Chemical mapping of a 177-nucleotide RNA with DMS.
Source: RMDB library M2PK90, as collected in RNAgym.
The DMS profile rests on 628 reads.
RNA sequence: GGGAACGACUCGAGUAGAGUCGAAAAUCAAAUACUCAAACUUCACUUCAGAACAGAAGACGCACGCAGCGAGCGAGAGAGAGACUCACUCACCCAACCCAGGGAAGGGACCACCAGGAGGAAAAAACUAGACCUAUAUCUUCGGAUAUAGGUCUAGAAAAGAAACAACAACAACAAC
Reactivity to DMS in 0.01 (KOAc 150mM, MgCl2 10mM, bicine 150mM(pH8.5), 24C), signal-to-noise 1, nucleotides 027 to 126: u020c190a050a150a110u040a050c050u000c080a040a080a210c060u010u010c090a070c140u000u000c010a130g000a060a070c110a080g020a000a100g010a140c140g000c000a010c100g020c090a000g040c030g000a090g020c000g000a100g000a080g060a060g010a100g040a010c080u000c050a130c050u000c010a130c020c000c030a060a110c010c010c050a080g020g000g000a080a050g000g010g000a030c030c020a030c080c010a070g000g000a060g020g000a000a060a050a120a010a090
Conditions: 150 mM KOAc, 10 mM MgCl2 and 150 mM bicine (pH 8.5), 24 C. For DMS the reverse transcriptase was MarathonRT.